[RMDB]
RNA sequence: GGGAACGACUCGAGUAGAGUCGAAAAGUGCCGGCAAUACAGUGUGUAUGGAGGUCUCAAUGGCUCGGAAGUGCCAGCAAAACGGCGUAGAUAUUAGCAGACGUAUGGGCGUAAGACUUUUAUUGAAAAAAGUACAUAAGCUUCGGCUUAUGUACAAGAUUAUUUUUUUCUUCGGAAAAAAAUAAUCAAAAGAAACAACAACAACAAC
Reactivity to 2A3 in 0.01 (KOAc 150mM, MgCl2 10mM, bicine 150mM(pH8.5), 24C), signal-to-noise 2, nucleotides 027 to 156: g080u040g010c010c020g000g030c020a030a020u100a070c030a070g030u020g020u000g010u130a050u110g040g000a010g050g030u010c000u000c040a070a100u070g050g000c030u020c060g030g020a100a010g020u010g080c000c020a030g030c060a060a060a020a020c040g060g020c020g010u020a020g030a090u060a050u200u090a040g040c060a020g020a030c010g040u070a020u080g020g040g010c010g010u030a050a060g010a040c020u030u030u160u160a160u140u150g050a110a110a000a000a020a000g000u000a000c000a000u000a000a000g000c010u010u040c150g110g000c000u000u000a000u010g000u000a010c000a000a000
Reactivity to DMS in 0.01 (KOAc 150mM, MgCl2 10mM, bicine 150mM(pH8.5), 24C), signal-to-noise 2, nucleotides 027 to 156: g030u000g050c030c010g020g050c040a060a120u010a060c030a110g020u000g020u000g030u000a080u000g020g010a120g020g000u000c010u010c050a070a110u000g020g010c030u010c030g000g010a090a150g010u000g020c020c000a040g010c020a040a040a090a120c090g010g050c010g050u000a060g010a120u000a060u010u000a070g000c040a130g020a050c010g040u010a060u000g000g020g030c020g030u020a080a120g010a070c040u000u000u010u000a100u020u020g000a010a090a080a130a050a230g010u000a000c000a030u000a000a000g000c000u010u000c300g040g000c000u000u020a000u000g010u000a000c000a010a060